[RMDB]
RNA sequence: GGGAACGACUCGAGUAGAGUCGAAAACACCCGCAAUUCGUUGCGGGUGAGAGCACCACUCCUGCGGGAGUUAAGGCCAUAGGGACAGCCGGGUGCAAAGCCAUAGCAGGUCCUUCGGGACCUGCAAUUACUAUACCCCAUUCGUGGGGUAUAGUAAAAAAGAAACAACAACAACAAC
Reactivity to DMS in 0.01 (KOAc 150mM, MgCl2 10mM, bicine 150mM(pH8.5), 24C), signal-to-noise 3, nucleotides 027 to 126: c000a010c000c000c000g010c010a000a010u000u010c170g020u000u000g020c010g000g000g000u000g010a030g000a110g000c010a020c000c010a110c000u000c000c000u000g030c220g020g000g000a010g010u000u010a070a090g010g010c010c030a090u000a120g020g000g000a080c080a160g000c010c010g010g020g010u000g020c010a060a050a130g000c010c010a090u010a120g010c010a000g010g010u000c000c010u000u020c130g010g000g000a010c000c000u010g000c010a020a010
Reactivity to 2A3 in 0.01 (KOAc 150mM, MgCl2 10mM, bicine 150mM(pH8.5), 24C), signal-to-noise 2, nucleotides 027 to 126: c000a000c020c020c010g000c000a020a060u070u080c170g070u080u000g000c010g010g000g000u020g010a000g010a010g000c000a000c020c000a010c000u010c000c000u040g040c210g060g000g000a010g010u030u160a090a020g010g000c020c000a100u180a120g090g000g090a020c010a010g000c010c000g020g010g010u010g000c000a010a040a010g010c000c010a060u140a040g000c000a000g000g020u010c020c000u030u070c230g040g000g000a000c010c000u000g000c000a000a000

Source: RMDB library M2PK50, as collected in RNAgym. Chemical mapping of a 177-nucleotide RNA with DMS and 2A3. For DMS, 3,664 sequencing reads were counted. The RNA was probed in 150 mM KOAc, 10 mM MgCl2 and 150 mM bicine (pH 8.5) at 24 C. DMS adducts were read by reverse transcription with MarathonRT.